[RMDB]
RNA sequence: GGGAACGACUCGAGUAGAGUCGAAAACUGUUAAGAAAUCUUUACCUCCUCAAGGUCAUGAAGAUCAGUACCUUAUUUUGAGUGUGUGUGGCAGGUGGGGGAGGUGGUGCGUCACCCUAUAGAGUACGAUUUCUCAGGGCAGAGAAGACACUGUCAAAUAAAAUCCAGGAUUCGUCCUGGAUUUUAUAAAAGAAACAACAACAACAAC
Reactivity to DMS in 0.01 (KOAc 150mM, MgCl2 10mM, bicine 150mM(pH8.5), 24C), signal-to-noise 2, nucleotides 027 to 156: c060u020g040u020u000a080a160g020a070a060a060u020c030u000u010u000a060c020c010u010c020c040u000c090a080a150g020g060u000c040a060u010g010a100a130g030a040u000c030a150g010u010a100c090c030u010u000a130u000u000u000u010g000a070g000u000g030u000g040u010g030u000g020g030c080a090g020g040u020g000g050g010g040g010a030g010g010u000g020g000u010g030c050g030u000c060a040c020c040c030u010a150u000a140g000a120g040u000a040c070g010a120u000u000u000c010u000c080a090g000g000g000c010a070g010a150g010a070a120g000a120c040a080c050u000g050u000c020a040a090
Reactivity to 2A3 in 0.01 (KOAc 150mM, MgCl2 10mM, bicine 150mM(pH8.5), 24C), signal-to-noise 3, nucleotides 027 to 156: c000u000g030u060u060a070a040g030a070a150a070u060c050u050u080u070a080c020c000u000c010c020u060c030a000a040g030g000u030c030a100u070g060a060a050g040a190u060c040a020g030u070a060c040c000u110u150a180u080u220u090u110g070a100g020u090g000u020g010u000g010u040g050g020c020a000g010g040u070g050g000g000g010g010a030g000g010u030g010g000u040g010c030g030u030c010a060c000c000c020u060a100u090a120g050a000g050u020a050c080g050a110u030u070u020c020u040c080a060g020g000g010c010a010g030a010g030a070a030g040a010c040a010c090u080g020u130c020a050a140

An RNA of 207 nucleotides, treated with DMS and 2A3 and read out base by base. Reactivities are given for positions 27 through 156. The reactions ran in a buffer of 150 mM KOAc, 10 mM MgCl2 and 150 mM bicine (pH 8.5), at 24 C.